Record summary
Structure probing data (DMS and 2A3) for a 177-nucleotide construct.
RNA sequence: GGGAACGACUCGAGUAGAGUCGAAAAGAGUAACCAACAAUGUGAUCUUGCUUGCGGAGGCAAGACUUGCACAGUAUAAAAUCUGCAAGUUGUGCUAUUGUUGGAAAGAAUACUGUGAAGUCAACAAAGUCCAUAAAUUAUUCGUAAUUUAUGGACUAAAAGAAACAACAACAACAAC
Reactivity to DMS in 0.01 (KOAc 150mM, MgCl2 10mM, bicine 150mM(pH8.5), 24C), signal-to-noise 9, nucleotides 027 to 126: g010a130g010u030a090a210c000c010a000a010c000a010a010u000g000u010g000a150u040c140u020u040g010c000u000u000g000c030g000g010a030g020g010c200a100a110g000a020c010u000u010g020c020a030c020a010g000u010a050u020a050a040a080a090u000c020u000g000c010a010a010g010u010u030g030u010g020c020u000a000u000u000g000u000u000g000g000a050a080a100g000a150a070u030a010c010u000g010u000g000a050a030g000u000c020a140a100c250a090a090
Reactivity to 2A3 in 0.01 (KOAc 150mM, MgCl2 10mM, bicine 150mM(pH8.5), 24C), signal-to-noise 9, nucleotides 027 to 126: g100a000g060u100a050a050c000c000a000a000c000a010a010u150g040u060g300a140u110c120u170u270g010c000u000u010g010c010g040g070a020g020g050c080a110a050g010a010c000u000u080g020c010a000c000a010g020u020a030u040a300a040a010a090u010c010u020g000c000a010a000g010u080u120g210u230g050c010u020a010u000u000g000u000u000g010g000a000a030a010g050a020a060u160a070c000u000g000u000g020a020a000g020u030c010a010a030c030a070a240
Values cover nucleotides 27 to 126. The RNA was probed in 150 mM KOAc, 10 mM MgCl2 and 150 mM bicine (pH 8.5) at 24 C. It was measured as part of the RMDB library OK1LIB.